[RMDB]
Chemical mapping of a 177-nucleotide RNA with DMS and 2A3. For DMS the reverse transcriptase was MarathonRT. The reactions ran in a buffer of 150 mM KOAc, 10 mM MgCl2 and 150 mM bicine (pH 8.5), at 24 C.
RNA sequence: GGGAACGACUCGAGUAGAGUCGAAAAUGCAAGACGGUUGCUGAGCUUGUCGAAGCAUGAAUCUUGCGUCGUUCUUAGUUAAAAUCACUUAUGGUUCGACAAGUUCACCGAUCGUGAUUUCAGGUUGCUUAUCCAUCAGGUUCGCCUGAUGGAUAAGAAAAGAAACAACAACAACAAC
Reactivity to DMS in 0.01 (KOAc 150mM, MgCl2 10mM, bicine 150mM(pH8.5), 24C), signal-to-noise 5, nucleotides 027 to 126: u030g000c120a050a080g010a030c010g010g010u000u000g000c300u000g000a040g000c010u000u000g010u000c000g010a050a010g000c000a010u000g010a060a080u020c130u000u000g010c190g000u000c020g000u000u000c010u000u000a080g020u020u020a070a070a110a080u030c130a080c120u000u000a030u010g000g000u000u010c020g000a010c010a020a010g000u000u000c000a020c080c000g000a020u010c020g000u000g000a100u000u010u000c070a080g010g000u010u000g010
Reactivity to 2A3 in 0.01 (KOAc 150mM, MgCl2 10mM, bicine 150mM(pH8.5), 24C), signal-to-noise 5, nucleotides 027 to 126: u120g020c010a000a050g090a030c010g010g010u000u020g010c010u000g000a000g000c000u010u010g000u000c010g010a000a000g100c010a010u030g060a040a040u130c080u110u210g070c060g010u010c010g010u010u000c020u030u100a210g050u120u190a080a080a100a170u180c070a070c060u070u050a020u080g200g000u070u020c000g000a000c010a010a020g000u000u000c010a000c010c010g000a010u020c000g000u000g130a200u010u050u090c020a020g140g000u070u080g020
Source: RMDB libraries RFM100 and RFMREP, as collected in RNAgym.